[RMDB]
RNA sequence: GGGAACGACUCGAGUAGAGUCGAAAAACACGGACCAAGGAGUCUGACAUGCGUGCGAGUCGACGGGUUCUGAAACCUGGGAUGCGCAAGGAAGCUGACGAGCGGGAGGCCUUCACGGGCUGCACCGAGUCUCUGGGUACUUCGGUACCCAGAGACUAAAAGAAACAACAACAACAAC
Reactivity to DMS in 0.01 (KOAc 150mM, MgCl2 10mM, bicine 150mM(pH8.5), 24C), signal-to-noise 2, nucleotides 027 to 126: a020c030a080c070g010g000a090c000c080a100a120g030g000a060g040u000c070u020g030a140c080a040u030g030c030g080u000g000c000g000a130g070u020c040g030a090c040g020g000g030u000u000c090u040g020a030a020a070c000c000u020g010g000g000a030u000g000c000g040c020a080a120g000g000a200a040g000c030u000g010a080c200g000a220g000c090g000g000g020a200g000g000c030c000u000u000c280a140c190g020g020g040c010u050g010c100a170c050c040g000
Reactivity to 2A3 in 0.01 (KOAc 150mM, MgCl2 10mM, bicine 150mM(pH8.5), 24C), signal-to-noise 2, nucleotides 027 to 126: a020c060a020c010g050g000a010c020c020a140a170g130g010a090g010u030c010u070g040a060c010a030u110g020c020g050u080g010c000g040a020g060u030c000g010a020c030g000g020g010u040u040c130u190g050a130a050a000c000c020u010g000g030g000a010u030g030c000g000c010a020a020g040g020a060a030g010c040u030g080a040c010g020a050g010c030g000g030g000a030g010g040c000c000u040u060c080a060c080g010g000g000c050u080g000c060a060c010c000g010
An RNA of 177 nucleotides, treated with DMS and 2A3 and read out base by base.
Reactivities are given for positions 27 through 126.
For DMS the reverse transcriptase was MarathonRT.
The reactions ran in a buffer of 150 mM KOAc, 10 mM MgCl2 and 150 mM bicine (pH 8.5), at 24 C.